[RMDB]
RNA sequence: GGGAACGACUCGAGUAGAGUCGAAAAGAGCGAGUUAAUAUUAGAUCGUCGCGAUCUAAAGAGUCCGACACGCUGUCGCGGGGCAGCACCUCCCGGGAAAGGGCCCUUGGUUCGGAUUCGAAAGAAACAUGCAUCGGUGAUUCGUCACCGAUGCAUGAAAAGAAACAACAACAACAAC
Reactivity to DMS in 0.01 (KOAc 150mM, MgCl2 10mM, bicine 150mM(pH8.5), 24C), signal-to-noise 1, nucleotides 027 to 126: g000a030g070c030g000a080g020u020u050a130a100u040a140u000u000a000g000a000u000c010g020u000c290g040c120g000a010u000c000u000a010a020a090g010a060g010u000c030c000g010a060c100a210c130g010c020u000g050u010c030g030c090g000g010g010g010c030a040g000c000a180c060c030u000c000c020c020g000g020g000a070a090a130g020g000g000c020c020c000u000u000g000g000u000u030c030g000g000a030u000u000c000g000a100a060a110g010a080a070a120